RNA sequence: GGGAACGACUCGAGUAGAGUCGAAAAGAUAUGGACGCCAUGGGAGUACUAAUCUCGGAAACGAGAUGUACGUUGAUCAUGAAGCGUCCUAAGUCAAAACAAUCUGGACGUUCGCGUCCAGAUUGAAUCGUAUUGUCAUCUUCGGAUGACAAUACGAAAAAGAAACAACAACAACAAC
Reactivity to DMS in 0.01 (KOAc 150mM, MgCl2 10mM, bicine 150mM(pH8.5), 24C), signal-to-noise 2, nucleotides 027 to 126: g010a050u000a300u000g000g010a010c010g010c000c010a010u000g020g000g010a030g010u000a000c020u000a110a080u000c000u000c010g000g000a050a090a130c030g000a010g030a010u000g010u000a000c000g010u000u020g030a010u000c000a010u000g000a140a190g020c000g030u000c000c000u010a000a040g000u000c050a080a130a150a210c010a010a000u000c000u000g000g000a010c000g030u000u020c280g030c010g010u010c010c000a000g000a000u000u000g000a040a090
Reactivity to 2A3 in 0.01 (KOAc 150mM, MgCl2 10mM, bicine 150mM(pH8.5), 24C), signal-to-noise 2, nucleotides 027 to 126: g010a000u060a040u100g030g000a010c000g000c000c000a000u000g010g070g030a090g020u020a000c010u120a090a160u020c010u000c010g010g000a020a070a020c010g010a000g010a030u040g020u000a010c000g110u190u090g100a020u030c010a000u010g100a180a070g010c000g000u000c010c000u000a000a000g020u000c020a020a020a080a160c010a010a000u000c000u000g000g010a000c010g030u040u140c300g000c000g140u000c000c000a000g010a010u000u010g000a010a040

Structure probing data (DMS and 2A3) for a 177-nucleotide construct. It was measured as part of the RMDB library TTRDEL. The reactions ran in a buffer of 150 mM KOAc, 10 mM MgCl2 and 150 mM bicine (pH 8.5), at 24 C. For 2A3 the reverse transcriptase was SuperScript II with manganese. For 2A3, 2,623 sequencing reads were counted. Reactivities are given for positions 27 through 126. DMS adducts were read by reverse transcription with MarathonRT.